An RNA of 207 nucleotides, treated with 2A3 and read out base by base. 2A3 adducts were read by reverse transcription with SuperScript II with manganese. The RNA was probed in 150 mM KOAc, 10 mM MgCl2 and 150 mM bicine (pH 8.5) at 24 C.

RNA sequence: GGGAACGACUCGAGUAGAGUCGAAAAGGGGUCAUGACCAUCGAUCUCAUUGGACUGAUGACCAUACUGAAGCCUCCACGGUAUGCAAGGUCCGUUUGAGGGAGGUCAUGACGGAGGCACCCAAACUUACAAAUCGUCUUCGGACGAUUUGUAAGAAGAAUCCUUAAGCCUUCGGGCUUAAGGAUUCAAAAGAAACAACAACAACAAC
Reactivity to 2A3 in 0.01 (KOAc 150mM, MgCl2 10mM, bicine 150mM(pH8.5), 24C), signal-to-noise 2, nucleotides 027 to 156: g010g000g090g020u010c000a010u000g000a000c010c020a070u300c030g000a020u000c000u010c000a000u010u030g010g000a000c020u020g040a300u000g000a160c000c000a000u000a010c010u020g030a100a010g020c020c000u030c010c000a000c010g010g000u000a000u000g010c040a080a080g000g000u000c010c060g190u010u020u060g000a010g000g000g010a010g000g000u000c000a000u000g000a000c010g010g010a000g000g000c000a030c010c000c000a050a060a070c000u010u000a000c000a000a000a000u000c010g020u000c000u040u080c240g140g010a000c000g000a010u000u010u000g000u000a000a000g000a010a010